[RMDB]
RNA sequence: GGGAACGACUCGAGUAGAGUCGAAAAUAGACCUGAUUCGUCAGGUCUACCAGCGAGGGAGAGAGCGAGGGUCCCACGCUCCCAGGGUGGCACGCUCCCAAAGACUUCCUGAAUUCGUUCAGGAAAAGUUAAGAGUGUGUUUCGACACACUCUUAACAAAAGAAACAACAACAACAAC
Reactivity to 2A3 in 0.01 (KOAc 150mM, MgCl2 10mM, bicine 150mM(pH8.5), 24C), signal-to-noise 2, nucleotides 027 to 126: u070a010g000a000c000c000u010g010a020u010u060c150g050u010c090a000g010g010u000c000u010a020c000c010a030g040c010g050a100g000g040g010a090g000a020g020a000g030c030g010a080g050g000g060u040c030c000c000a020c020g020c000u000c000c020c000a010g070g020g020u070g020g000c050a020c060g020c000u030c000c000c000a070a080a010g100a030c070u040u010c010c000u000g000a020a010u110u080c210g030u070u000c020a000g000g000a010a040a000a010
Reactivity to DMS in 0.01 (KOAc 150mM, MgCl2 10mM, bicine 150mM(pH8.5), 24C), signal-to-noise 4, nucleotides 027 to 126: u000a010g000a000c000c000u010g000a040u000u030c230g020u010c010a010g010g010u000c000u000a010c060c050a070g010c070g000a110g030g000g000a080g020a090g000a060g010c050g040a100g030g010g020u000c030c000c030a120c040g000c020u000c010c010c030a110g000g010g010u000g000g020c090a060c050g010c030u000c000c010c040a060a090a130g000a110c150u000u000c010c000u000g010a020a020u000u010c200g020u000u000c000a010g000g000a010a010a040a090